RNA sequence: GGGAACGACUCGAGUAGAGUCGAAAAUUUUGAACUAUCAUUGGUGUUUAGGAUGAACUCCAAAUGAUCAGUCUCUUACUGGUUUAUAUACAUCCUAUGCGAAAAAUCUCGAUAUUGCUAACAAGUCUAUUACCGCCCUGUUCGCAGGGCGGUAAUAAAAAGAAACAACAACAACAAC
Reactivity to 2A3 in 0.01 (KOAc 150mM, MgCl2 10mM, bicine 150mM(pH8.5), 24C), signal-to-noise 2, nucleotides 027 to 126: u090u110u050u160g010a070a020c000u000a000u050c050a080u000u000g000g040u030g050u000u040u060a090g020g090a100u040g010a050a010c040u050c020c020a060a030a090u030g000a000u040c060a010g030u020c000u030c080u100u120a100c040u050g000g140u100u100u060a140u030a000u030a000c010a010u000c000c000u090a060u210g150c070g080a060a140a040a050a180u100c030u000c040g040a040u080a060u180u150g060c000u030a080a080c090a090a070g040u080c040
Reactivity to DMS in 0.01 (KOAc 150mM, MgCl2 10mM, bicine 150mM(pH8.5), 24C), signal-to-noise 1, nucleotides 027 to 126: u040u010u000u110g030a210a030c010u050a030u000c030a060u000u000g040g000u000g020u000u000u000a060g000g000a070u000g000a060a010c020u010c000c010a070a000a180u000g000a000u040c060a010g020u010c160u010c110u000u000a010c000u000g040g000u030u070u000a060u000a160u060a110c070a020u000c020c030u000a060u030g010c060g110a000a040a030a030a070u000c100u000c040g000a030u000a090u000u000g000c090u020a030a040c100a070a070g050u000c040

This 177-nucleotide RNA was probed chemically with 2A3 and DMS.
The RNA was probed in 150 mM KOAc, 10 mM MgCl2 and 150 mM bicine (pH 8.5) at 24 C.
The DMS profile rests on 1,204 reads.